[RMDB]
The record gives the reactivity of an RNA of 207 nucleotides to 2A3 and DMS. The RNA was probed in 150 mM KOAc, 10 mM MgCl2 and 150 mM bicine (pH 8.5) at 24 C. For 2A3, 2,158 sequencing reads were counted. DMS adducts were read by reverse transcription with MarathonRT. High DMS reactivity at an A or C suggests that its Watson-Crick edge is free.
RNA sequence: GGGAACGACUCGAGUAGAGUCGAAAAACCCUGUUCGCAGGGUAAAAAAGAUAUGGAUGAUCAAGAACAUCGAUCUAUGCGUAACAUCGUUCGGAAACGAACGUGGCAUAGGGAGUUCGAAAUCAUCCUAAGUCAAAAACCAAUGUUCGCAUUGGAAUUGGCGUAAUAAGUUCGCUUAUUACGCCAAAAAAGAAACAACAACAACAAC
Reactivity to 2A3 in 0.01 (KOAc 150mM, MgCl2 10mM, bicine 150mM(pH8.5), 24C), signal-to-noise 2, nucleotides 027 to 156: a010c030c000c010u010g030u050u110c300g000c100a000g020g000g030u040a060a030a030a010a050a020g010a010u030a010u050g000g010a000u000g010a000u020c110a170a100g000a000a000c010a020u300c030g010a000u000c000u000a010u010g000c010g000u030a010a050c050a160u210c020g000u010u000c010g000g000a000a000a000c010g000a000a000c000g000u010g020g000c000a000u000a000g010g000g010a010g010u010u000c000g000a020a020a000u000c000a000u020c000c000u000a000a000g000u000c020a000a000a070a000a070c290c010a010a010u300g030u090u130c250g000c110a000u040u090g000g060a100a070
Reactivity to DMS in 0.01 (KOAc 150mM, MgCl2 10mM, bicine 150mM(pH8.5), 24C), signal-to-noise 2, nucleotides 027 to 156: a100c000c000c000u000g050u020u000c200g030c030a080g040g030g040u000a000a030a040a080a060a070g000a070u010a200u000g000g000a030u000g010a040u000c000a020a300g040a010a000c010a190u000c120g010a050u000c000u000a020u010g020c000g030u020a120a100c050a030u030c020g040u010u010c000g030g020a040a030a070c000g030a000a010c020g010u000g030g000c000a010u000a040g000g010g000a040g020u000u000c010g000a230a000a010u000c000a030u000c000c010u000a000a060g000u000c010a040a090a090a090a120c000c000a030a080u000g030u000u000c170g000c030a130u010u000g010g000a070a110